About this RNA
Conditions: 150 mM KOAc, 10 mM MgCl2 and 150 mM bicine (pH 8.5), 24 C. An RNA of 177 nucleotides, treated with 2A3 and DMS and read out base by base. Source: RMDB library TTRDEL, as collected in RNAgym. For 2A3, 16,964 sequencing reads were counted. For DMS the reverse transcriptase was MarathonRT. High 2A3 reactivity points to a flexible backbone, as in loops and unpaired stretches.
RNA sequence: GGGAACGACUCGAGUAGAGUCGAAAAGAUAUGGACCCUGCAGCUUUUGACGAGGUGUCGGAAACGACACUCGAUAAGCUGUCAGGGUCCUAAGUCAAAUCAAGCAAGGGUUCGCCCUUGCUUGAAAUCAACUAAAUUACUUCGGUAAUUUAGUUGAAAAAGAAACAACAACAACAAC
Reactivity to 2A3 in 0.01 (KOAc 150mM, MgCl2 10mM, bicine 150mM(pH8.5), 24C), signal-to-noise 5, nucleotides 027 to 126: g010a010u060a030u120g000g000a000c000c010c010u010g000c000a010g000c010u120u190u260u300g170a110c040g030a080g140g160u060g000u040c000g010g020a030a050a020c020g000a000c010a000c000u000c000g000a010u010a080a030g000c000u000g030u120c000a000g010g010g000u000c000c000u010a000a000g000u000c010a000a000a070u020c000a010a000g000c000a000a000g040g010g020u060u120c180g200c010c000c010u010u000g000c000u000u010g000a000a000a000
Reactivity to DMS in 0.01 (KOAc 150mM, MgCl2 10mM, bicine 150mM(pH8.5), 24C), signal-to-noise 7, nucleotides 027 to 126: g000a040u000a300u010g000g010a010c000c000c000u000g010c010a010g000c000u000u000u010u010g020a210c150g000a050g020g020u000g020u010c000g010g000a090a070a210c010g010a010c000a020c000u000c000g000a130u000a010a020g010c000u000g000u010c010a000g010g010g010u000c000c000u000a010a060g010u000c020a100a110a160u000c000a000a010g010c000a000a010g010g010g010u010u010c280g010c000c000c000u000u000g000c000u000u000g000a010a070a120